[RMDB]
RNA sequence: GGGAACGACUCGAGUAGAGUCGAAAAGAUAUGGAAGAGCAUGCACUGAUGACCUCGGAAACGAGCAAGGUGACCAUGAACUACUCUUCCUAAGUCAAAGUUUGAGGACGUUCGCGUCCUCAAACAAGCAUACAGAAUUGUUCGCAAUUCUGUAUGCAAAAGAAACAACAACAACAAC
Reactivity to 2A3 in 0.01 (KOAc 150mM, MgCl2 10mM, bicine 150mM(pH8.5), 24C), signal-to-noise 5, nucleotides 027 to 126: g020a020u100a040u150g000g000a010a000g000a020g020c000a010u020g010c010a000c030u110g030a260u150g050a240c000c030u000c000g010g020a060a080a050c020g000a010g010c030a100a120g000g010u010g020a170c140c010a000u010g000a010a020c080u210a050c000u300c000u020u000c000c000u010a150a020g050u050c040a110a040a110g000u000u000u000g000a010g000g000a000c010g010u050u070c290g020c010g130u040c000c000u010c010a000a000a010c010a010a000
Reactivity to DMS in 0.01 (KOAc 150mM, MgCl2 10mM, bicine 150mM(pH8.5), 24C), signal-to-noise 6, nucleotides 027 to 126: g000a040u000a300u010g000g010a020a010g010a010g000c010a010u000g010c000a010c020u000g010a070u010g000a080c300c010u000c000g000g000a080a090a150c020g000a030g010c050a080a110g000g010u000g010a060c180c020a030u010g000a050a030c070u020a270c000u000c000u000u000c000c000u010a030a130g000u000c040a100a080a140g000u000u000u000g010a020g010g010a010c000g030u010u010c190g020c010g030u000c000c000u000c000a000a000a010c000a060a080
An RNA of 177 nucleotides, treated with 2A3 and DMS and read out base by base. Conditions: 150 mM KOAc, 10 mM MgCl2 and 150 mM bicine (pH 8.5), 24 C. For DMS the reverse transcriptase was MarathonRT. The DMS profile rests on 6,597 reads.